RNA sequence: GGGAACGACUCGAGUAGAGUCGAAAAUUGGGGCCAUGCUGGUGAGGAGCAGCCGUCCCCUCUUUGCUGGCAUCCCAAGCUGGUAAGGCUUAUCCAGAGGGUGGCAAUACCAGGGCCGCAGAUCAUCAGUUUUUACUUUUCUGUGUUAAAUCCAAGAGAUCGGGAUAAAUUUCGAUUUAUCCCGAUCAAAAGAAACAACAACAACAAC
Reactivity to 2A3 in 0.01 (KOAc 150mM, MgCl2 10mM, bicine 150mM(pH8.5), 24C), signal-to-noise 1, nucleotides 027 to 156: u050u010g000g000g010g070c090c090a040u020g010c000u000g000g000u010g010a000g020g010a000g000c070a000g020c060c070g140u080c010c010c000c000u000c000u010u010u020g000c000u040g000g000c010a050u050c000c000c000a000a000g000c040u020g000g070u040a070a070g050g000c050u140u130a020u100c000c000a110g110a300g080g010g020u180g020g000c000a020a000u190a030c130c000a010g020g040g000c000c000g030c030a010g070a010u030c000a000u090c010a070g010u060u030u180u300u200a080c020u010u080u000u030c040u050g010u020g040u100u110a030a030a130u140c110c080a060a030g250a030
Chemical mapping of a 207-nucleotide RNA with 2A3.